About this RNA: The record gives the reactivity of an RNA of 207 nucleotides to 2A3 and DMS. It was measured as part of the RMDB library RNAMAK. Conditions: 150 mM KOAc, 10 mM MgCl2 and 150 mM bicine (pH 8.5), 24 C. For 2A3, 7,628 sequencing reads were counted. For DMS the reverse transcriptase was MarathonRT. For 2A3 the reverse transcriptase was SuperScript II with manganese.
RNA sequence: GGGAACGACUCGAGUAGAGUCGAAAAUCCUAAGUCAGUUUACGAGUCCUUGGAUUUAUGUAACGAAUGCAUCGGAAACGAUGCACUAUUACAUUGUCAGGACUCGAAUAAACUGAUAUGGAAAAGAAGUAGUAAAGCUUCGGCUUUACUACUUCAACACGUUCUAAAGAUUCGUCUUUAGAACGUGAAAAGAAACAACAACAACAAC
Reactivity to 2A3 in 0.01 (KOAc 150mM, MgCl2 10mM, bicine 150mM(pH8.5), 24C), signal-to-noise 7, nucleotides 027 to 156: u020c010c000u020a090a010g030u000c000a000g000u000u000u000a010c000g000a000g000u000c010c010u150u240g220g000a090u280u300u140a010u080g010u000a040a020c090g050a300a190u010g000c000a010u000c000g010g030a090a050a030c010g000a000u000g000c000a000c000u000a000u000u000a000c000a000u010u020g010u010c010a000g010g000a010c000u000c000g010a000a000u010a000a000a000c000u000g000a000u010a060u080g060g030a020a080a150a230g000a000a000g010u000a000g000u000a010a010a000g010c010u040u080c270g020g000c000u000u010u000a000c000u000a000c000u000u000c000a000a000
Reactivity to DMS in 0.01 (KOAc 150mM, MgCl2 10mM, bicine 150mM(pH8.5), 24C), signal-to-noise 2, nucleotides 027 to 156: u000c010c000u000a080a280g010u000c000a020g030u010u000u000a110c000g010a040g030u000c000c010u000u010g030g030a060u000u010u000a000u020g010u000a020a010c070g000a070a040u000g010c000a010u010c000g000g000a180a100a300c010g030a030u000g010c000a000c000u000a070u000u010a010c000a010u000u000g020u000c030a060g020g020a010c020u000c000g020a080a070u000a010a020a020c020u000g000a030u000a170u000g010g010a090a100a150a160g030a030a020g020u000a010g000u000a010a020a000g010c000u000u020c300g020g010c000u000u010u000a000c000u000a000c000u010u000c010a070a230